[RMDB]
RNA sequence: GGGAACGACUCGAGUAGAGUCGAAAAGGCUGCCUGCUCGGCGAUCAGGAGGUCGGUGCCGUACGCUUCCGCGAGUUCGCGCGAGUGGGCGUCGUCCUCGCGGAAGACGACGUGUGGGAGCAUAUCCCAUCCGCCUUUUAUUCGUAAAAGGCGGAUGAAAAGAAACAACAACAACAAC
Reactivity to DMS in 0.01 (KOAc 150mM, MgCl2 10mM, bicine 150mM(pH8.5), 24C), signal-to-noise 4, nucleotides 027 to 126: g000g030c010u000g010c020c010u000g000c040u010c050g020g020c030g000a070u020c080a130g020g010a120g010g010u000c020g010g000u020g000c060c020g010u010a080c060g000c000u000u000c020c000g020c000g010a020g010u010u010c000g030c000g000c020g000a130g010u030g040g020g010c000g000u030c000g000u000c060c000u000c000g020c000g000g000a020a020g000a070c020g000a070c020g010u010g000u010g000g010g000a050g010c060a090u030a080u020c010c000
Reactivity to 2A3 in 0.01 (KOAc 150mM, MgCl2 10mM, bicine 150mM(pH8.5), 24C), signal-to-noise 8, nucleotides 027 to 126: g060g000c020u100g160c030c000u020g010c030u040c020g060g010c020g050a100u070c060a070g180g050a050g030g060u100c070g020g100u120g040c010c000g030u080a090c050g010c000u010u020c000c000g000c010g010a010g030u030u080c020g000c010g000c020g060a090g140u290g100g140g000c000g010u060c020g000u000c000c000u000c000g010c020g000g030a010a010g030a040c020g020a010c020g090u140g020u050g040g010g010a030g000c020a030u050a080u160c010c010

Notes
An RNA of 177 nucleotides, treated with DMS and 2A3 and read out base by base. The 2A3 profile rests on 9,124 reads. Values cover nucleotides 27 to 126. The RNA was probed in 150 mM KOAc, 10 mM MgCl2 and 150 mM bicine (pH 8.5) at 24 C. The data come from the RNA Mapping Database (RMDB), library OK1LIB.